[RMDB]
RNA sequence: GGGAACGACUCGAGUAGAGUCGAAAAAUCACUUCAUGGCGUUUCAGAUGUUCUUUAUUAAAUAGACCUGUUUUACCAACAUCAGGUUUAUUAAGCGCAUGGGGAUUAGCCAUUUACUACCUCCGCAUCUAGCACUCUAAUUCGUUAGAGUGCUAGAAAAAGAAACAACAACAACAAC
Reactivity to 2A3 in 0.01 (KOAc 150mM, MgCl2 10mM, bicine 150mM(pH8.5), 24C), signal-to-noise 2, nucleotides 027 to 126: a030u040c020a010c040u090u030c090a040u040g020g020c020g000u000u080u080c070a060g030a170u030g020u030u000c010u040u100u090a220u140u180a110a130a010u020a000g000a010c000c000u020g160u030u050u070u100a130c080c030a080a050c020a050u020c000a010g010g020u030u000u000a010u000u020a000a020g010c020g000c000a000u010g020g050g000g000a010u090u030a030g010c000c000a040u120u120u120a070c050u090a080c010c040u060c030c010g070c020a020
Reactivity to DMS in 0.01 (KOAc 150mM, MgCl2 10mM, bicine 150mM(pH8.5), 24C), signal-to-noise 4, nucleotides 027 to 126: a090u010c090a060c140u010u000c110a050u000g010g010c010g010u010u000u000c030a070g010a050u000g010u000u000c010u010u000u000a090u020u000a050a070a020u000a010g000a010c000c000u000g010u010u000u000u000a240c300c230a050a090c210a030u000c000a000g000g010u000u000u000a000u000u000a030a070g010c090g000c000a000u010g020g010g020g000a050u000u000a190g010c030c010a020u000u010u010a060c130u000a110c080c050u000c040c060g030c210a230